[RMDB]
RNA sequence: GGGAACGACUCGAGUAGAGUCGAAAAGAAUGUAUGUAAACCGUGUGAAAAACGAUGGCUAUUCAGGAAUCGUUCUGAGGCAACAGGUAAAAUGGAAGACAGCCAAAUCCUUAGCAUACGGAAGAAACACGAUUAUCACGUUCGCGUGAUAAUCGUGAAAAGAAACAACAACAACAAC
Reactivity to DMS in 0.01 (KOAc 150mM, MgCl2 10mM, bicine 150mM(pH8.5), 24C), signal-to-noise 2, nucleotides 027 to 126: g020a100a060u000g010u000a020u040g010u000a060a090a120c000c020g000u000g020u000g000a030a010a080a030a020c110g000a030u010g040g020c040u020a300u000u030c190a090g000g000a050a030u000c030g000u000u000c040u000g000a080g010g000c300a050a080c120a030g000g020u030a070a090a160a120u030g000g010a090a230g000a100c070a150g000c000c000a050a060a180u000c060c090u000u020a030g000c000a020u010a010c030g080g010a070a130g010a190a060a110
Reactivity to 2A3 in 0.01 (KOAc 150mM, MgCl2 10mM, bicine 150mM(pH8.5), 24C), signal-to-noise 3, nucleotides 027 to 126: g120a050a080u140g020u200a090u040g090u070a060a080a030c000c000g020u000g000u000g040a250a030a000a010a000c000g020a040u030g250g030c030u050a090u290u280c130a110g040g040a060a030u030c000g020u020u000c030u010g010a000g000g000c060a040a050c090a080g010g000u030a010a110a050a060u130g010g070a100a070g120a090c020a040g010c000c000a000a000a090u140c020c020u000u020a000g000c000a000u000a000c000g020g040a020a020g050a020a050a000

Notes:
The data come from the RNA Mapping Database (RMDB), library OK1LIB. This 177-nucleotide RNA was probed chemically with DMS and 2A3. The DMS profile rests on 2,258 reads. The reactions ran in a buffer of 150 mM KOAc, 10 mM MgCl2 and 150 mM bicine (pH 8.5), at 24 C. Values cover nucleotides 27 to 126. DMS adducts were read by reverse transcription with MarathonRT.